[RMDB]
An RNA of 177 nucleotides, treated with DMS and read out base by base.
The reactions ran in a buffer of 150 mM KOAc, 10 mM MgCl2 and 150 mM bicine (pH 8.5), at 24 C.
It was measured as part of the RMDB library OK2TST.
DMS adducts were read by reverse transcription with MarathonRT.
RNA sequence: GGGAACGACUCGAGUAGAGUCGAAAAGUAACUUCUGAACCGAGAGAGAAAGUCCCUCUGCUGCCUCGCCUGCCAAGCUCUAAGUAGUCCCUUUCUUUCCUUUCUGGAUCCGUGCUCUCGAAAAUGAGGGUGACUCAUAAUUCGUUAUGAGUCACCCAAAAGAAACAACAACAACAAC
Reactivity to DMS in 0.01 (KOAc 150mM, MgCl2 10mM, bicine 150mM(pH8.5), 24C), signal-to-noise 1, nucleotides 027 to 126: g000u000a120a100c050u010u000c040u030g020a110a100c160c060g020a040g030a130g010a090g010a050a120a180g000u010c010c010c010u020c060u000g020c010u000g000c070c000u030c090g000c050c040u000g030c020c060a050a090g020c010u000c060u000a070a050g000u010a180g000u000c020c020c020u000u010u000c010u030u000u000c040c010u000u000u000c040u000g010g020a160u000c050c060g010u010g000c020u030c010u000c030g010a050a090a050a100u010g000a170